[RMDB]
RNA sequence: GGGAACGACUCGAGUAGAGUCGAAAAGAUAUGGAUCAUGGCAAGCGACGAUCUAUAAGGUUCGGAAACGAACCAUAGGGAGCUUGCAUGAUCCUAAGUCAAACGCUCUGCGUUCGCGCAGAGCGAACACCAACAACUACUUCGGUAGUUGUUGGUGAAAAGAAACAACAACAACAAC
Reactivity to 2A3 in 0.01 (KOAc 150mM, MgCl2 10mM, bicine 150mM(pH8.5), 24C), signal-to-noise 2, nucleotides 027 to 126: g000a000u020a000u040g000g000a000u000c020a000u030g300g080c010a020a010g000c010g300a300c020g000a080u000c000u010a030u020a300a300g000g000u000u000c000g000g000a000a000a000c000g000a000a000c020c010a000u010a000g040g000g000a010g000c000u000u000g000c010a010u000g000a000u000c000c000u000a000a000g020u010c020a090a000a200c020g000c010u040c010u020g040c010g040u050u120c300g030c020g000c070a000g000a000g020c000g000a020a000
Reactivity to DMS in 0.01 (KOAc 150mM, MgCl2 10mM, bicine 150mM(pH8.5), 24C), signal-to-noise 2, nucleotides 027 to 126: g000a010u000a030u020g010g000a010u010c000a000u000g010g010c010a000a030g000c000g000a120c280g020a030u020c000u000a000u000a130a160g000g010u000u000c010g010g000a020a040a050c030g020a000a000c010c010a040u000a010g000g000g000a020g010c010u000u000g000c000a010u000g000a010u000c000c000u000a000a100g000u000c010a120a120a300c020g020c000u000c000u000g030c010g000u000u010c240g020c020g020c010a010g000a010g000c000g000a030a070